Conditions: 150 mM KOAc, 10 mM MgCl2 and 150 mM bicine (pH 8.5), 24 C. Structure probing data (2A3 and DMS) for a 177-nucleotide construct. The data come from the RNA Mapping Database (RMDB), library TTRDES. Values are in units of 0.01, from 0 to 300, in steps of 10.

RNA sequence: GGGAACGACUCGAGUAGAGUCGAAAAGAUAUGGAAGCCCUCAUCGAGCGUUGAAAUGGUCUCGGAAACGAGACCAUGGAGCUCAAUGAGGCUUCCUAAGUCAAAGACGAACCUUCGGGUUCGUCAACCAAUAUCAGUGGUUCGCCACUGAUAUUGGAAAAGAAACAACAACAACAAC
Reactivity to 2A3 in 0.01 (KOAc 150mM, MgCl2 10mM, bicine 150mM(pH8.5), 24C), signal-to-noise 3, nucleotides 027 to 126: g010a020u070a040u170g000g010a010a010g020c110c040c040u010c010a020u040c060g010a010g010c030g240u300u100g000a030a040a010u010g010g000u000c010u010c010g020g020a000a050a030c010g000a000g000a000c000c010a000u000g000g000a000g000c000u000c010a000a010u020g000a010g010g000c000u000u000c000c000u000a070a010g010u000c050a130a050a080g000a010c000g010a010a000c010c000u080u140c300g100g000g000u000u000c000g000u000c000a000a000
Reactivity to DMS in 0.01 (KOAc 150mM, MgCl2 10mM, bicine 150mM(pH8.5), 24C), signal-to-noise 5, nucleotides 027 to 126: g000a030u000a300u000g010g010a020a010g000c170c030c030u000c030a010u000c060g000a000g010c010g010u010u030g000a140a140a010u000g000g010u000c000u000c000g020g000a070a140a180c010g010a010g000a000c000c000a010u000g000g000a120g010c000u000c000a030a000u000g000a010g000g010c010u000u000c000c000u000a020a060g010u010c040a090a150a160g010a020c010g000a010a010c000c000u000u010c240g010g010g020u000u000c010g010u000c010a030a110